Background:
Structure probing data (2A3 and DMS) for a 207-nucleotide construct. Source: RMDB library ARCHII, as collected in RNAgym. For 2A3, 1,207 sequencing reads were counted.
RNA sequence: GGGAACGACUCGAGUAGAGUCGAAAAGCGGUCUGAGCUUAAGAUAUAGUCCGACCCCGGCGAGAGCCGAUGUCGAGAGGAGAGGGGUGCGACCCCGGAGCUCGGCAGUAGGGAGACACACAGUAUGUUCCUGAUCUGAAGUAUACGGGAGCGUGCGCAUGCGUAUUGGCUUCGGCCAAUACGCAUGAAAAGAAACAACAACAACAAC
Reactivity to 2A3 in 0.01 (KOAc 150mM, MgCl2 10mM, bicine 150mM(pH8.5), 24C), signal-to-noise 2, nucleotides 027 to 156: g040c030g020g000u050c080u110g020a010g050c030u100u070a110a000g070a040u130a030u070a150g070u000c000c020g040a030c020c040c010c000g000g000c060g010a070g000a010g090c020c000g000a010u060g020u020c100g000a100g000a010g220g050a070g060a050g000g020g010g000u070g140c080g080a280c000c000c000c010g030g020a020g010c010u010c000g000g000c020a010g010u030a000g000g080g020a060g070a020c050a000c000a010c000a080g000u040a000u040g010u020u000c000c010u040g010a090u020c030u080g110a120a010g080u090a110u030a170c030g000g000g000a000g000c010g000u020g000c010g000
Reactivity to DMS in 0.01 (KOAc 150mM, MgCl2 10mM, bicine 150mM(pH8.5), 24C), signal-to-noise 2, nucleotides 027 to 156: g030c080g040g030u000c020u000g050a150g010c040u000u000a080a150g020a100u010a110u000a080g010u000c030c020g000a100c000c040c010c000g000g010c000g050a300g010a300g020c040c000g050a040u000g000u000c010g010a100g010a240g000g020a160g000a120g010g000g140g050u030g000c100g000a160c040c000c000c020g010g000a090g000c000u000c000g020g000c030a090g020u010a130g050g010g010a090g000a180c110a050c030a110c030a120g010u000a140u000g010u000u000c010c010u000g000a180u000c100u000g000a130a120g000u000a120u000a110c020g010g030g010a020g000c010g040u000g010c080g000
The DMS profile rests on 3,010 reads.